[RMDB]
RNA sequence: GGGAACGACUCGAGUAGAGUCGAAAAGUCUGAUGACGUGUGGGAAAACACUAGAAAUAUUAACUUGCUGUAAAGCAUCCUACUGCCAGCGGAAUCACAUCUGGUAACAGAUGCCUCUGGGGCCAAAUAACAAUUAGACUUUCGAGUCUAAUUGUUAAAAAGAAACAACAACAACAAC
Reactivity to 2A3 in 0.01 (KOAc 150mM, MgCl2 10mM, bicine 150mM(pH8.5), 24C), signal-to-noise 9, nucleotides 027 to 126: g030u000c050u060g090a080u130g030a060c050g040u040g010u020g030g110g010a050a090a070a030c040a020c040u060a050g150a080a130a030u210a090u130u110a090a060c040u040u090g020c020u030g070u160a120a120a010g010c010a030u030c010c010u040a070c020u050g090c000c000a020g000c010g030g020a040a050u120c050a040c000a070u000c010u010g010g000u010a060a020c000a010g000a010u010g010c000c000u010c000u010g020g000g030g020c020c020a030a080a050
Reactivity to DMS in 0.01 (KOAc 150mM, MgCl2 10mM, bicine 150mM(pH8.5), 24C), signal-to-noise 9, nucleotides 027 to 126: g010u010c060u020g010a070u010g000a110c080g010u010g010u010g010g010g010a110a090a100a060c070a040c080u000a080g010a100a100a120u020a070u020u010a070a080c080u010u000g010c020u000g000u030a060a100a050g010c040a100u000c010c020u000a050c130u020g010c010c000a020g010c080g000g000a080a030u010c210a210c020a020u000c000u000g000g000u040a120a130c010a020g000a010u000g000c040c020u000c020u000g010g000g010g010c110c120a040a090a130
Structure probing data (2A3 and DMS) for a 177-nucleotide construct.
Source: RMDB libraries RFM100 and RFMREP, as collected in RNAgym.
As a SHAPE reagent, 2A3 marks flexible, mostly unpaired nucleotides at the ribose 2'-OH.